[RMDB]
RNA sequence: GGGAACGACUCGAGUAGAGUCGAAAAAUCGUGAAAUCACUGUUACAUUGAAGGAAAAUUUUGGUUCUCGGUGGCGGCAGUUGUUUCCAGCGGGUGUCAUUUUGCCUGCUCACGCAAUAGCACGCAAAAUGGGUGUGACUCUUGAAGAUCUCAAUAAGCCCAGUAAAUUAUUCGUAAUUUACUGGGCAAAAGAAACAACAACAACAAC
Reactivity to 2A3 in 0.01 (KOAc 150mM, MgCl2 10mM, bicine 150mM(pH8.5), 24C), signal-to-noise 1, nucleotides 027 to 156: a000u030c010g030u030g020a020a010a070u050c030a000c000u100g030u010u060a000c010a070u070u110g040a020a070g040g040a000a020a000a160u090u080u200u200g010g000u000u020c020u010c000g000g050u030g000g000c040g050g000c040a050g000u040u030g000u000u050u000c000c040a000g010c000g030g000g050u000g030u060c030a020u000u010u000u040g000c020c010u000g000c000u000c010a080c070g070c010a030a030u000a060g010c010a020c000g000c010a000a000a000a000u060g010g000g030u140g020u030g030a000c030u030c000u000u060g030a090a020g010a030u060c040u090c010a000a140u300a040a050
Reactivity to DMS in 0.01 (KOAc 150mM, MgCl2 10mM, bicine 150mM(pH8.5), 24C), signal-to-noise 1, nucleotides 027 to 156: a100u010c090g020u000g010a020a060a060u020c050a040c070u010g050u000u010a100c050a080u010u010g030a140a100g000g020a050a040a070a190u010u020u010u000g010g010u000u010c000u000c030g010g010u000g010g020c030g020g050c040a090g010u050u000g020u000u010u000c010c020a130g020c130g020g020g000u000g010u010c060a080u000u000u000u000g010c010c030u000g000c020u000c070a100c170g040c150a070a180u010a050g020c010a040c060g000c020a000a010a010a030u010g010g010g060u020g010u000g040a050c010u000c030u030u000g020a090a110g020a090u020c030u000c020a050a100u000a060a300
This 207-nucleotide RNA was probed chemically with 2A3 and DMS. Source: RMDB library OK3TST, as collected in RNAgym. Values cover nucleotides 27 to 156. For 2A3, 538 sequencing reads were counted.